The record gives the reactivity of an RNA of 177 nucleotides to 2A3 and DMS. For DMS the reverse transcriptase was MarathonRT.
[RMDB]
RNA sequence: GGGAACGACUCGAGUAGAGUCGAAAACCUCCUGUGAGUUCGACUGCGUGGAGGAGAUGGUCAGCCUGGCUGCCAUGCUCACAGGUACCGUGCUGAGGGCCUUGGAGCCCACCCUGCUGCUGGCGCACCAGUCAGACAUUUUCGAAUGUCUGACUGGAAAAGAAACAACAACAACAAC
Reactivity to 2A3 in 0.01 (KOAc 150mM, MgCl2 10mM, bicine 150mM(pH8.5), 24C), signal-to-noise 4, nucleotides 027 to 126: c000c010u040c000c000u030g020u020g060a040g030u050u280c080g070a060c060u090g050c100g110u130g050g100a070g040g010a050g030a040u060g020g020u230c020a010g010c030c200u150g090g030c010u010g020c000c010a040u070g020c000u020c000a020c000a000g020g020u020a030c000c040g090u040g030c030u090g050a160g010g000g000c000c070u140u170g100g020a050g040c010c000c010a000c000c010c000u040g020c000u000g000c020u020g020g040c040g000c040a040
Reactivity to DMS in 0.01 (KOAc 150mM, MgCl2 10mM, bicine 150mM(pH8.5), 24C), signal-to-noise 2, nucleotides 027 to 126: c020c020u000c020c020u010g020u000g010a050g010u000u000c090g020a090c060u010g020c070g030u010g020g000a090g020g030a090g000a080u000g010g000u000c030a070g010c000c100u010g040g030c010u010g000c010c000a080u010g000c000u000c010a050c020a030g000g000u010a060c070c060g000u010g030c080u010g000a090g000g000g010c030c040u010u010g030g000a150g010c020c010c050a050c080c020c020u000g010c030u000g010c050u000g010g010c050g010c110a260
The DMS profile rests on 3,023 reads.